[RMDB]
RNA sequence: GGGAACGACUCGAGUAGAGUCGAAAAGGCAUGGCCCGCCGCAUCCAGGCCGUCAUUCAGCUGCUUGUUUCCUAAGGGCUGGGUCGUAGCCGUGAAUCAAGUAGAUAAAAUCUCUCCCUCAAAGAGUUUACAUUUGAGUGAGAAGAGACAGACCGGAGAUAAUCACUCCUUUCGAGGAGUGAUUAUCAAAAGAAACAACAACAACAAC
Reactivity to 2A3 in 0.01 (KOAc 150mM, MgCl2 10mM, bicine 150mM(pH8.5), 24C), signal-to-noise 4, nucleotides 027 to 156: g010g000c020a020u030g020g010c010c000c000g030c030c020g060c060a040u070c030c000a010g060g000c020c040g020u050c060a270u220u050c070a040g010c020u040g010c000u030u050g020u080u110u080c050c070u100a090a220g180g020g000c040u140g010g020g000u020c010g020u020a050g000c000c000g040u050g050a020a030u120c080a070a030g060u040a010g110a160u150a140a130a070a090u030c000u000c000u000c020c000c010u000c000a020a020a000g140a030g080u130u300u230a070c050a070u000u010u040g000a010g000u030g040a050g000a100a050g010a000g010a020c060a030g070a040c010c060g030g010a070
Reactivity to DMS in 0.01 (KOAc 150mM, MgCl2 10mM, bicine 150mM(pH8.5), 24C), signal-to-noise 2, nucleotides 027 to 156: g030g010c030a120u000g010g010c000c000c000g070c060c030g000c110a110u000c060c070a040g030g010c000c080g030u010c110a200u020u000c100a080g030c030u000g030c020u000u000g030u000u000u000c030c090u000a120a170g030g000g010c000u000g000g000g050u000c030g040u000a080g040c020c060g000u000g010a070a060u000c000a030a080g000u000a100g010a160u010a060a070a080a220u010c000u000c010u000c000c030c000u010c000a010a010a030g000a200g040u000u010u000a090c140a240u000u000u000g020a000g000u010g000a170g000a080a050g010a140g000a030c030a100g000a130c010c020g000g020a300